[RMDB]
RNA sequence: GGGAACGACUCGAGUAGAGUCGAAAAUGUGCAUCGUGGUCAAAUGCUCAGACUCCUUGGUGGCUGCUUAUGCACCACGGAUGUUUGAGCAUGUGCUAUGGUGUCUAAAAAGGCCACUUCGGUGGCCGUCGGAUAUGCAGUUCGCUGCAUAUCCGACAAAAGAAACAACAACAACAAC
Reactivity to DMS in 0.01 (KOAc 150mM, MgCl2 10mM, bicine 150mM(pH8.5), 24C), signal-to-noise 2, nucleotides 027 to 126: u000g000u010g020c010a010u000c010g030u000g000g010u030c160a040a070a010u000g000c000u000c000a010g000a010c010u000c000c010u000u000g000g030u000g010g010c030u000g030c300u000u020a060u000g010c020a020c000c000a030c090g000g000a020u000g030u000u000u000g010a010g000c000a000u000g000u000g000c010u000a020u010g020g020u000g030u000c050u020a020a050a090a090a140g000g000c000c000a000c000u000u000c230g020g020u000g000g020c010c000
Reactivity to 2A3 in 0.01 (KOAc 150mM, MgCl2 10mM, bicine 150mM(pH8.5), 24C), signal-to-noise 3, nucleotides 027 to 126: u110g030u090g000c020a010u030c010g000u020g030g050u180c040a180a170a040u030g000c000u000c000a000g000a030c000u000c000c020u020u020g040g000u030g110g220c030u020g000c040u300u190a180u300g000c000a010c010c010a000c000g020g000a080u300g020u020u000u000g000a000g000c000a000u010g000u030g000c000u000a010u030g000g000u010g000u030c020u090a100a100a050a010a030g000g000c010c000a010c000u020u100c140g110g000u000g010g000c010c000
This 177-nucleotide RNA was probed chemically with DMS and 2A3. For 2A3, 2,739 sequencing reads were counted. It was measured as part of the RMDB library RFMREP. The DMS profile rests on 2,613 reads. For DMS the reverse transcriptase was MarathonRT.